[RMDB]
RNA sequence: GGGAACGACUCGAGUAGAGUCGAAAACACCGCCCGUCGUUAUCUAAGAUGGAGGUGCGGGUGAAGAUGUGAGUGUGUAGAGUUGGUGCGAUGCAUGGAAGUUAAUGACGAGUGCGAGUAGUUAGCUACUCUCCUAUUGGUUCGCCAAUAGGAGAGUAAAAGAAACAACAACAACAAC
Reactivity to 2A3 in 0.01 (KOAc 150mM, MgCl2 10mM, bicine 150mM(pH8.5), 24C), signal-to-noise 2, nucleotides 027 to 126: c000a000c000c000g030c050c000c000g020u010c020g030u060u050a090u140c060u080a050a130g010a160u100g000g040a040g000g040u060g010c040g020g020g010u040g020a030a080g090a060u090g050u050g060a010g000u140g030u020g020u090a070g010a060g080u090u070g150g000u040g050c030g050a020u040g030c040a020u040g000g060a060a080g040u090u110a080a020u110g030a030c020g000a000g070u150g060c020g000a050g000u050a010g000u060u040a030g000c010u010
Reactivity to DMS in 0.01 (KOAc 150mM, MgCl2 10mM, bicine 150mM(pH8.5), 24C), signal-to-noise 3, nucleotides 027 to 126: c020a100c040c010g000c030c010c030g040u010c010g000u010u000a070u010c100u010a070a140g020a090u000g010g010a160g010g000u010g030c060g020g020g020u010g000a080a070g000a100u000g000u000g000a050g020u000g030u010g010u000a040g010a060g020u000u000g010g020u010g020c060g010a110u000g020c080a060u000g000g010a110a050g020u000u000a050a050u000g010a060c040g020a090g020u010g000c020g020a050g000u010a070g010u010u010a110g010c080u000